[RMDB]
RNA sequence: GGGAACGACUCGAGUAGAGUCGAAAAUCUUCUGAUCGUGAGCUUGAACUCCAGCCCGACAGCAUAAUUGGAGAAAGGAAAUUUAAAUUGAUGUCAAAUGGUGAUGGAAGCUAUGACACUCACCGCAGCACUCUCAUCAUUUCGAUGAUGAGAGUGCAAAAGAAACAACAACAACAAC
Reactivity to DMS in 0.01 (KOAc 150mM, MgCl2 10mM, bicine 150mM(pH8.5), 24C), signal-to-noise 1, nucleotides 027 to 126: u000c060u000u030c070u040g000a060u000c050g040u000g000a080g000c040u010u010g010a140a050c060u010c010c040a100g010c030c010c040g000a110c110a010g020c120a080u030a050a050u030u020g030g000a020g010a070a100a070g000g000a090a070a120u000u000u010a040a080a020u000u010g000a130u000g000u000c050a070a100a100u010g010g060u000g030a020u010g000g030a140a050g000c060u010a100u000g000a040c060a050c040u010c010a030c000c030g010c200a100
Reactivity to 2A3 in 0.01 (KOAc 150mM, MgCl2 10mM, bicine 150mM(pH8.5), 24C), signal-to-noise 2, nucleotides 027 to 126: u000c040u030u010c000u000g100a190u040c030g020u070g020a100g040c020u010u040g100a060a060c000u000c000c010a000g010c000c000c000g070a000c010a020g070c000a030u050a170a150u180u190g010g010a030g000a090a040a010g250g160a120a060a070u230u280u130a090a290a060u140u120g030a020u050g040u060c020a010a030a090u140g020g030u000g040a030u100g080g060a080a040g000c070u130a110u160g040a010c010a020c020u040c010a030c000c050g010c000a000
Source: RMDB library OK2TRN, as collected in RNAgym. The record gives the reactivity of an RNA of 177 nucleotides to DMS and 2A3. In probing experiments dimethyl sulfate is read out at A N1 and C N3, which are open when not base-paired. The RNA was probed in 150 mM KOAc, 10 mM MgCl2 and 150 mM bicine (pH 8.5) at 24 C. The 2A3 profile rests on 1,164 reads. Reactivities are given for positions 27 through 126. For 2A3 the reverse transcriptase was SuperScript II with manganese. For DMS, 797 sequencing reads were counted.